[RMDB]
RNA sequence: GGGAACGACUCGAGUAGAGUCGAAAAACAAGCUAUCACAGGGAUUAGUAGCAAUGUAACUCUCUAUGCACAAUGGAUUGGCACUUCAGGCAAUACAACUCAACCGACACAGCCAACUCAACCGACGCCCUAUACCCCUAUUCGUAGGGGUAUAGGGAAAAGAAACAACAACAACAAC
Reactivity to 2A3 in 0.01 (KOAc 150mM, MgCl2 10mM, bicine 150mM(pH8.5), 24C), signal-to-noise 3, nucleotides 027 to 126: a000c040a020a020g030c000u020a000u130c040a020c030a150g040g020g070a050u090u050a050g040u020a020g040c060a070a070u090g030u110a090a070c010u000c000u000c040u080a050u190g030c020a030c020a120a100u050g010g030a080u040u050g060g010c020a020c050u090u060c060a040g030g000c030a000a070u070a110c040a080a080c030u030c060a030a090c030c020g040a020c020a010c020a090g030c010c010a050a060c040u040c020a020a090c020c060g100a060c040g090
Reactivity to DMS in 0.01 (KOAc 150mM, MgCl2 10mM, bicine 150mM(pH8.5), 24C), signal-to-noise 3, nucleotides 027 to 126: a100c050a070a150g000c050u000a030u020c070a150c150a130g000g000g010a080u000u000a070g040u000a050g020c070a100a110u000g010u000a060a070c120u000c010u010c030u000a050u020g010c110a040c080a060a090u000g000g010a050u000u000g030g010c090a020c050u000u010c080a060g010g010c020a030a090u010a050c090a040a070c110u000c050a050a070c040c000g000a100c060a060c120a070g020c040c020a030a060c060u000c080a060a100c050c060g000a060c260g020